[RMDB]
RNA sequence: GGGAACGACUCGAGUAGAGUCGAAAACGUAAAGGGCGAGCUUUUGUCCGGAAUGGUUCCGCCGUGAUCGGGCCAUGCAAUAGUUGCCAACUACAACUAUGCUCCGGUUGCUCAGGCAGCGUAACGCACAAUGGAACAACCUUCGGGUUGUUCCAAACAAAGCACUCUGAUUCGUCAGAGUGCUUUGAAAAGAAACAACAACAACAAC
Reactivity to 2A3 in 0.01 (KOAc 150mM, MgCl2 10mM, bicine 150mM(pH8.5), 24C), signal-to-noise 4, nucleotides 027 to 156: c030g020u080a050a020a140g100g060g000c030g000a030g010c030u070u100u180u190g070u080c010c010g000g020a060a070u070g020g000u300u300c020c040g000c050c090g110u110g070a170u150c010g000g000g000c010c000a010u020g000c010a070a250u020a020g010u000u000g010c040c050a120a020c060u110a000c020a000a000c000u000a010u010g020c030u000c010c010g030g000u050u070g000c000u010c060a030g110g000c020a010g050c020g060u080a040a050c050g000c060a050c060a100a180u090g000g000a010a000c010a000a000c010c010u050u110c210g010g000g000u000u000g000u000u000c000c000a000a000a000
Reactivity to DMS in 0.01 (KOAc 150mM, MgCl2 10mM, bicine 150mM(pH8.5), 24C), signal-to-noise 2, nucleotides 027 to 156: c030g030u020a080a140a090g000g010g010c020g030a110g020c080u000u000u000u010g030u000c020c030g010g000a140a070u000g030g000u000u000c020c000g020c070c090g000u000g010a070u000c020g020g000g000c030c050a080u010g000c060a120a060u000a020g000u000u000g010c000c000a150a190c170u000a060c010a010a010c000u000a030u000g010c040u000c040c000g000g000u010u010g000c010u000c030a100g010g020c020a120g000c050g020u000a060a140c040g030c060a090c070a120a210u000g000g010a020a000c000a020a020c010c000u000u010c300g000g060g020u000u000g000u000u010c000c000a010a000a070
An RNA of 207 nucleotides, treated with 2A3 and DMS and read out base by base. The data come from the RNA Mapping Database (RMDB), library M2RFPK.